[RMDB]
RNA sequence: GGGAACGACUCGAGUAGAGUCGAAAAGAUAUGGAUCCCUAGGACAUGUCGACCACUCGGAAACGAGUGGAAUCGACAACAGCCUAGUGGAUCCUAAGUCAAACGCAUGGCGUUCGCGCCAUGCGAACAACAUCAGAACGUUCGCGUUCUGAUGUUGAAAAGAAACAACAACAACAAC
Reactivity to 2A3 in 0.01 (KOAc 150mM, MgCl2 10mM, bicine 150mM(pH8.5), 24C), signal-to-noise 3, nucleotides 027 to 126: g010a000u030a000u070g000g000a000u040c010c010c000u000a010g010g000a020c190a300u300g000u000c000g010a020c000c000a000c000u000c000g010g030a050a010a020c000g020a010g010u010g000g020a020a030u050c010g030a000c000a010a010c090a010g000c000c000u020a020g030u300g130g000a010u000c000c000u000a000a020g000u000c010a050a080a120c020g000c000a000u010g010g000c020g020u070u110c300g010c000g020c140c000a000u000g020c000g000a020a020
Reactivity to DMS in 0.01 (KOAc 150mM, MgCl2 10mM, bicine 150mM(pH8.5), 24C), signal-to-noise 3, nucleotides 027 to 126: g000a000u000a060u000g000g000a000u000c000c000c000u000a010g010g010a020c040a300u000g030u000c000g010a030c000c000a030c000u000c010g010g000a010a000a040c000g030a010g030u010g000g000a020a020u000c000g020a000c000a090a060c240a150g000c010c000u010a000g010u010g020g010a010u000c000c000u000a000a040g000u000c010a150a100a260c020g000c000a000u000g010g000c020g050u010u020c280g000c000g020c000c000a010u010g000c000g010a010a110
Source: RMDB library TTRDES, as collected in RNAgym.
The record gives the reactivity of an RNA of 177 nucleotides to 2A3 and DMS.
For 2A3 the reverse transcriptase was SuperScript II with manganese.
High 2A3 reactivity points to a flexible backbone, as in loops and unpaired stretches.
For 2A3, 6,991 sequencing reads were counted.